[RMDB]
The record gives the reactivity of an RNA of 177 nucleotides to 2A3 and DMS.
RNA sequence: GGGAACGACUCGAGUAGAGUCGAAAAAGAGAUGAGCCGCCAGAUUGCAUUUGGAGGUUGGGCCUGUACCCAACUCCUCCUUCACAACUUUGGCAAGUGCACCGUAUCUGGAUCUGUAUGAAAAAUAACCUCCUAGGAUCUUCGGAUCCUAGGAGGUAAAAGAAACAACAACAACAAC
Reactivity to 2A3 in 0.01 (KOAc 150mM, MgCl2 10mM, bicine 150mM(pH8.5), 24C), signal-to-noise 2, nucleotides 027 to 126: a000g060a000g010a040u070g010a010g050c000c010g000c010c020a010g040a030u060u050g000c030a070u150u030u120g020g020a020g000g000u020u010g000g000g040c020c190u090g150u300a060c070c000c000a040a040c040u030c000c000u000c000c000u000u050c030a080c010a020a100c050u060u100u000g000g010c100a080a190g050u080g080c050a030c040c050g120u190a150u070c020u010g040g080a080u010c040u020g130u110a180u200g210a110a010a010a000a040u160a040
Reactivity to DMS in 0.01 (KOAc 150mM, MgCl2 10mM, bicine 150mM(pH8.5), 24C), signal-to-noise 1, nucleotides 027 to 126: a040g000a040g000a030u000g010a190g000c050c110g040c040c000a000g030a040u000u000g000c090a200u000u000u000g000g030a000g030g010u000u000g030g000g000c000c090u010g000u020a250c050c000c000a000a070c020u010c070c010u000c010c030u000u000c140a220c000a010a030c190u050u000u060g000g060c040a110a070g000u020g080c110a050c060c000g000u030a040u030c020u010g000g040a030u040c080u020g000u030a060u000g020a060a130a050a090a010u010a090

The data come from the RNA Mapping Database (RMDB), library OK1LIB. As a SHAPE reagent, 2A3 marks flexible, mostly unpaired nucleotides at the ribose 2'-OH.